Chemical mapping of a 177-nucleotide RNA with DMS and 2A3. Conditions: 150 mM KOAc, 10 mM MgCl2 and 150 mM bicine (pH 8.5), 24 C.
RNA sequence: GGGAACGACUCGAGUAGAGUCGAAAAAGAAACCGGCUGGUGCGCAACAAGAUAUUGAGCGGCAUAAACUUAAUGCGAUGGGGGCUUUUGCUGAAGCGCAAACCUGUCGCCGAUUAGUCUUGCUGAACCUAAUUGUGACUUUCGAGUCACAAUUAGGAAAAGAAACAACAACAACAAC
Reactivity to DMS in 0.01 (KOAc 150mM, MgCl2 10mM, bicine 150mM(pH8.5), 24C), signal-to-noise 3, nucleotides 027 to 126: a090g020a090a120a090c040c040g020g010c070u010g010g010u000g030c050g010c030a050a070c110a060a090g020a080u010a080u010u000g010a090g010c070g020g020c030a030u000a090a060a040c050u000u000a080a140u020g000c000g010a020u010g000g010g000g000g010c080u000u000u000u010g030c090u020g000a130a110g010c130g020c070a010a040a110c030c020u000g000u000c020g030c010c090g010a130u020u000a050g000u000c060u000u000g010c030u000g020a120a150
Reactivity to 2A3 in 0.01 (KOAc 150mM, MgCl2 10mM, bicine 150mM(pH8.5), 24C), signal-to-noise 2, nucleotides 027 to 126: a000g090a050a050a040c000c000g040g030c030u040g010g040u060g000c020g010c030a010a090c020a080a040g070a100u100a070u200u220g070a030g040c020g010g000c000a030u080a020a090a010c040u030u100a070a010u190g000c000g030a040u040g000g010g020g020g030c040u100u140u090u180g030c060u120g060a090a020g040c040g000c080a040a020a020c000c000u010g000u000c010g000c000c000g040a010u020u120a010g030u000c030u010u060g000c010u040g010a070a070
The DMS profile rests on 2,725 reads. It was measured as part of the RMDB library OK2TRN.